Record summary: Structure probing data (2A3 and DMS) for a 177-nucleotide construct.
[RMDB]
RNA sequence: GGGAACGACUCGAGUAGAGUCGAAAAGCAUUAGCCGGCCGAUCAGCGCGGACGCCCGAUGGUGCAAGGUGGCGCGACGCAGGUCGACGUAGUAGUCGGCCUCCCGGCCAGACGACAGCGUGACGCGCUCUCCACAGAGCUUCGGCUCUGUGGAGAGAAAAGAAACAACAACAACAAC
Reactivity to 2A3 in 0.01 (KOAc 150mM, MgCl2 10mM, bicine 150mM(pH8.5), 24C), signal-to-noise 3, nucleotides 027 to 126: g030c040a080u050u120a010g030c020c010g030g000c030c040g070a120u070c050a040g020c000g000c030g060g020a030c010g000c010c020c030g050a090u140g080g060u070g000c020a070a050g020g050u050g000g080c040g020c020g050a040c010g000c040a000g000g020u030c010g000a000c010g000u030a040g050u040a010g020u070c000g000g000c000c000u000c000c000c000g000g000c000c000a040g000a040c020g010a000c030a050g010c020g030u050g090a100c040g000c000g000
Reactivity to DMS in 0.01 (KOAc 150mM, MgCl2 10mM, bicine 150mM(pH8.5), 24C), signal-to-noise 2, nucleotides 027 to 126: g000c020a070u040u020a040g000c020c020g030g010c080c050g000a100u040c060a080g000c060g000c000g020g010a140c100g000c030c060c010g000a070u020g000g010u040g050c070a070a090g010g000u000g000g000c070g000c010g000a100c130g030c140a020g000g010u000c000g000a000c030g000u010a180g010u030a180g000u040c000g000g010c040c020u040c040c040c020g000g000c000c030a030g000a160c040g000a040c080a100g000c000g040u000g040a120c030g040c070g020

Conditions: 150 mM KOAc, 10 mM MgCl2 and 150 mM bicine (pH 8.5), 24 C.